The record gives the reactivity of an RNA of 207 nucleotides to 2A3. The reactions ran in a buffer of 150 mM KOAc, 10 mM MgCl2 and 150 mM bicine (pH 8.5), at 24 C.

[RMDB]
RNA sequence: GGGAACGACUCGAGUAGAGUCGAAAAGCGUAACGGCUGGGUGUAACCCAACUCUAGGAGUGCUGAUUAGCGGGCUUGACUCCGUAACAAAUAGGCACUGGUGGUAAAAAGCAUCCCACCUACUCACAAAGCUCCAAAUUCUUCGGAAUUUGGAGAACAGUAGUGGAUCCUUCGGGAUCCACUACUGAAAAGAAACAACAACAACAAC
Reactivity to 2A3 in 0.01 (KOAc 150mM, MgCl2 10mM, bicine 150mM(pH8.5), 24C), signal-to-noise 1, nucleotides 027 to 156: g010c040g020u060a040a110c070g110g000c040u050g000g050g020u070g050u090a140a130c000c010c010a080a060c040u100c040u060a130g010g140a000g070u010g000c010u020g010a130u000u030a030g020c010g000g000g050c130u120u270g010a050c000u000c040c000g000u010a020a020c000a040a100a050u110a070g030g020c020a000c070u010g020g020u010g000g040u070a220a110a050a000a000g050c000a010u020c010c040c000a010c000c010u010a010c020u030c050a060c060a100a230a060g100c010u000c000c000a000a000a000u020u000c000u000u030c140g070g010a070a040u000u000u000g000g000a000g010a000a000